[RMDB]
RNA sequence: GGGAACGACUCGAGUAGAGUCGAAAACGCCGAUCUGCGCUACAAUAUGGAAGUGACGCUGGAGGAAGCCUAUGCGGGCAAGACCGCGCAAAUCCGCGUGCCGACCUCCAUUACCUGCGAUGAAUGACGUUUUAUACCCUUUCGAGGGUAUAAAACGAAAAGAAACAACAACAACAAC
Reactivity to 2A3 in 0.01 (KOAc 150mM, MgCl2 10mM, bicine 150mM(pH8.5), 24C), signal-to-noise 3, nucleotides 027 to 126: c030g060c010c030g020a100u010c020u130g000c000g010c030u060a030c030a160a150u090a040u190g030g040a060a050g020u010g070a050c020g010c070u130g000g030a020g010g010a090a040g010c020c010u070a130u240g040c030g020g040g020c030a060a020g080a110c040c000g000c010g000c060a030a040a060u020c020c000g000c000g010u040g090c010c050g070a100c000c000u010c000c010a000u030u060a050c000c030u000g010c020g030a050u050g070a060a070u090g020a010
Reactivity to DMS in 0.01 (KOAc 150mM, MgCl2 10mM, bicine 150mM(pH8.5), 24C), signal-to-noise 4, nucleotides 027 to 126: c060g030c020c070g010a060u000c040u010g000c010g020c040u000a110c170a090a090u010a060u010g000g000a060a080g010u000g000a070c050g000c050u000g040g060a060g000g020a300a160g030c070c210u000a100u000g010c020g000g010g000c080a090a140g020a130c040c010g000c030g010c060a020a260a120u000c040c030g000c060g020u020g010c110c060g010a100c020c020u020c010c020a040u000u000a060c100c070u000g010c060g020a080u010g010a070a050u010g010a160